[RMDB]
This 177-nucleotide RNA was probed chemically with DMS and 2A3.
For 2A3 the reverse transcriptase was SuperScript II with manganese.
For DMS, 734 sequencing reads were counted.
Conditions: 150 mM KOAc, 10 mM MgCl2 and 150 mM bicine (pH 8.5), 24 C.
RNA sequence: GGGAACGACUCGAGUAGAGUCGAAAAGCAAAGGGGUUCGCCCCUUUGCAAAUAAACCGAUCAAAUAUAAGAAUAUAACGCGAAGAUCGGAAUAGAGCAAAAAAAGGUUCUACUUCGGUAGAACCAAGCUAAGUACAGAGUUCGCUCUGUACUUAGCAAAAGAAACAACAACAACAAC
Reactivity to DMS in 0.01 (KOAc 150mM, MgCl2 10mM, bicine 150mM(pH8.5), 24C), signal-to-noise 1, nucleotides 027 to 126: g020c000a060a010a090g000g020g010g020u000u010c120g060c000c000c000c000u000u000u000g000c000a030a050a070u000a040a170a190c000c010g000a010u000c000a210a090a080u000a120u000a180a160g000a200a150u000a040u010a100a070c180g020c120g010a210a110g000a000u000c000g000g000a100a180u020a010g040a080g010c060a010a000a040a030a080a030a050g050g000u000u000c000u000a000c000u000u010c140g080g010u000a000g050a000a000c000c000a000a050
Reactivity to 2A3 in 0.01 (KOAc 150mM, MgCl2 10mM, bicine 150mM(pH8.5), 24C), signal-to-noise 2, nucleotides 027 to 126: g010c020a000a000a010g070g000g000g000u030u050c100g110c000c000c000c000u000u000u000g010c000a000a000a000u000a000a000a000c010c000g010a000u020c060a050a150a020u210a030u060a190a070g040a270a040u150a020u070a280a090c120g040c070g150a150a020g000a030u000c000g040g060a010a010u120a030g120a020g060c140a020a020a090a090a000a030a090g000g000u010u000c000u000a020c010u020u100c180g060g000u000a000g000a000a030c010c000a020a000